Conditions: 150 mM KOAc, 10 mM MgCl2 and 150 mM bicine (pH 8.5), 24 C. The record gives the reactivity of an RNA of 207 nucleotides to DMS and 2A3. The 2A3 profile rests on 2,820 reads. 2A3 adducts were read by reverse transcription with SuperScript II with manganese.
[RMDB]
RNA sequence: GGGAACGACUCGAGUAGAGUCGAAAAUUUAACGCUGUUUUAUUGGCGCAAAGGUUUACGGAUAAACAACUAAUAAUUAAACCUUUUGUGUGCGAAACGUGGUUGGUUAACGUACUCUUUAAUCGCUUUGGGGAUGUGUCCUUCGGGACACAUCCAAACACUAUCUCUGAUUCGUCAGAGAUAGUGUAAAAGAAACAACAACAACAAC
Reactivity to DMS in 0.01 (KOAc 150mM, MgCl2 10mM, bicine 150mM(pH8.5), 24C), signal-to-noise 2, nucleotides 027 to 156: u010u000u000a050a140c080g020c010u000g030u000u000u010u000a130u000u020g020g030c020g020c080a070a070a050g010g020u000u010u000a080c100g020g010a220u000a070a090a100c060a040a110c090u000a050a110u010a090a130u010u000a050a120a020c020c020u000u000u010u010g010u000g040u000g010c080g010a040a070a070c100g020u000g010g030u000u010g020g020u000u010a040a090c030g020u000a030c060u000c040u000u000u000a030a100u000c050g020c070u000u000u010g020g000g010g020a020u000g000u000g000u000c000c000u000u010c300g050g010g000a030c000a010c000a000u000c000c010a010a040
Reactivity to 2A3 in 0.01 (KOAc 150mM, MgCl2 10mM, bicine 150mM(pH8.5), 24C), signal-to-noise 5, nucleotides 027 to 156: u060u050u030a050a010c020g010c050u050g110u030u060u020u080a160u090u230g090g000c020g000c010a030a010a000g010g000u040u030u020a030c070g030g050a120u180a180a170a040c060a050a010c080u130a060a160u110a110a060u210u100a040a030a030c010c000u040u050u130u080g070u000g010u030g030c050g010a080a010a010c040g020u030g020g030u040u040g040g040u020u030a030a010c050g020u040a050c040u020c000u060u090u100a110a100u110c070g050c150u080u090u120g100g040g000g000a010u010g010u000g000u010c000c000u020u020c230g030g000g000a000c000a000c000a000u010c000c000a000a000
High 2A3 reactivity points to a flexible backbone, as in loops and unpaired stretches. It was measured as part of the RMDB library M2RFPK. Values are in units of 0.01, from 0 to 300, in steps of 10.